The record gives the reactivity of an RNA of 207 nucleotides to DMS and 2A3.
For DMS, 3,848 sequencing reads were counted.
The 2A3 profile rests on 5,481 reads.
DMS (dimethyl sulfate) methylates the pairing face of unpaired adenines and cytosines.
The RNA was probed in 150 mM KOAc, 10 mM MgCl2 and 150 mM bicine (pH 8.5) at 24 C.
2A3 adducts were read by reverse transcription with SuperScript II with manganese.

RNA sequence: GGGAACGACUCGAGUAGAGUCGAAAACCUCACUACAUCUUACUGUUCCUAAAGAAUUUGUGACAGGUACAGUAAAACGUAUUGCAAGGUUUAUCAGUUCCUAUAAACAGGUAAAUAACAAUAUAUGAAAAGCAAAGACUGUUCGCAGUCUUUGCAACAUUACAGGUCUGUUCGCAGACCUGUAAUGAAAAGAAACAACAACAACAAC
Reactivity to DMS in 0.01 (KOAc 150mM, MgCl2 10mM, bicine 150mM(pH8.5), 24C), signal-to-noise 2, nucleotides 027 to 156: c020c000u000c030a050c040u000a030c000a010u000c010u010u000a020c020u010g010u000u000c020c000u010a160a160a120g020a130a200u000u000u000g020u010g030a200c220a050g000g020u000a010c000a030g010u000a010a000a020a040c010g020u010a010u000u010g010c050a100a080g010g040u000u000u010a090u020c120a130g030u000u010c010c020u000a160u000a100a080a120c060a130g030g010u000a060a040a090u000a090a130c040a080a110u000a140u010a060u000g000a060a060a110a170g000c030a010a020a020g000a040c010u000g060u000u000c300g060c020a030g000u000c000u000u000u010g010c000a000a060
Reactivity to 2A3 in 0.01 (KOAc 150mM, MgCl2 10mM, bicine 150mM(pH8.5), 24C), signal-to-noise 8, nucleotides 027 to 156: c000c000u010c000a010c020u030a000c000a030u070c020u010u000a000c000u000g010u020u070c000c000u050a090a140a100g120a240a300u240u260u290g150u080g060a080c090a050g000g000u010a000c000a000g000u000a000a000a010a000c020g000u010a000u000u040g020c080a090a040g020g000u010u020u020a130u110c030a020g010u010u030c010c000u050a090u180a090a070a010c050a010g010g110u100a080a100a070u150a170a060c030a130a010u130a030u070a050u250g070a110a130a020a020g000c000a000a000a000g000a000c000u010g020u040u080c160g000c100a000g000u010c000u000u000u000g000c000a000a000